[RMDB]
The record gives the reactivity of an RNA of 177 nucleotides to DMS and 2A3.
2A3 adducts were read by reverse transcription with SuperScript II with manganese.
Values cover nucleotides 27 to 126.
DMS (dimethyl sulfate) methylates the pairing face of unpaired adenines and cytosines.
For DMS the reverse transcriptase was MarathonRT.

RNA sequence: GGGAACGACUCGAGUAGAGUCGAAAAACAGACUUUAACUGGAUGCAGCGGUGGCGAAUAUCGCACAAUGGGCGGAUGCCUGAUGCAGCGACGCCGCGUGAGGGAUGAAGGCAUCCGGGCUCCGAACUAUAAUUUUGUUAUUCGUAACAAAAUUAUAAAAAGAAACAACAACAACAAC
Reactivity to DMS in 0.01 (KOAc 150mM, MgCl2 10mM, bicine 150mM(pH8.5), 24C), signal-to-noise 1, nucleotides 027 to 126: a010c260a300g000a200c180u010u020u030a160a180c000u000g000g000a070u000g000c000a300g000c050g000g040u030g000g000c010g000a090a040u020a070u020c000g020c010a120c090a020a080u010g010g000g000c000g000g010a070u040g010c000c000u000g020a060u000g000c040a140g000c000g000a030c030g030c020c000g000c000g000u020g000a100g030g010g000a070u000g000a080a120g010g010c020a010u000c010c010g000g010g000c070u000c000c000g000a050a090c150
Reactivity to 2A3 in 0.01 (KOAc 150mM, MgCl2 10mM, bicine 150mM(pH8.5), 24C), signal-to-noise 3, nucleotides 027 to 126: a000c010a010g190a060c030u000u160u190a100a000c020u040g000g000a000u050g000c000a040g000c040g000g060u060g040g020c020g030a140a110u200a070u300c100g020c010a030c020a020a140u100g030g020g000c040g210g080a100u300g000c000c000u040g010a040u050g040c020a030g030c000g000a010c000g010c000c000g010c000g030u050g040a040g060g100g020a020u180g120a060a040g040g000c000a000u000c000c000g000g010g000c020u010c020c030g000a030a000c010